[RMDB]
RNA sequence: GGGAACGACUCGAGUAGAGUCGAAAAUGGUGUUAAGUGGAAUAAGUGGCACUAUAUACAUAUAUGUACAGGGGGCUACAUAUAUGUAUAUGCCCCCUCGCGUCAGUAUAAGUAGGUAUAAGGUGGAAUUAAUGCCAUCAUUCGUGAUGGCAUUAAUAAAAGAAACAACAACAACAAC
Reactivity to DMS in 0.01 (KOAc 150mM, MgCl2 10mM, bicine 150mM(pH8.5), 24C), signal-to-noise 5, nucleotides 027 to 126: u020g000g030u010g010u000u000a060a140g010u000g000g010a110a120u020a060a150g020u020g010g000c020a090c120u010a100u010a020u010a000c010a020u000a020u000a030u010g000u000a040c110a070g010g010g010g000g000c150u010a030c020a020u010a050u020a030u030g010u010a020u000a000u000g010c010c010c010c030c000u000c020g010c070g020u000c060a040g010u010a040u030a020a130g010u000a040g000g020u000a050u030a040a160g000g030u000g010g010a100
Reactivity to 2A3 in 0.01 (KOAc 150mM, MgCl2 10mM, bicine 150mM(pH8.5), 24C), signal-to-noise 4, nucleotides 027 to 126: u080g030g020u030g040u080u090a190a100g070u070g130g100a180a130u190a220a030g060u110g000g030c010a000c060u020a010u000a000u010a040c010a010u030a010u000a000u010g010u010a020c100a110g000g010g000g060g010c020u020a030c030a010u040a000u020a000u030g020u020a020u000a000u010g010c000c000c000c000c000u010c020g040c010g010u010c020a030g020u030a030u020a180a080g090u090a080g090g070u060a080u040a160a070g050g010u050g030g030a010
This 177-nucleotide RNA was probed chemically with DMS and 2A3. The data come from the RNA Mapping Database (RMDB), library OK1LIB. Values are in units of 0.01, from 0 to 300, in steps of 10. For 2A3 the reverse transcriptase was SuperScript II with manganese. For DMS the reverse transcriptase was MarathonRT. In probing experiments dimethyl sulfate is read out at A N1 and C N3, which are open when not base-paired.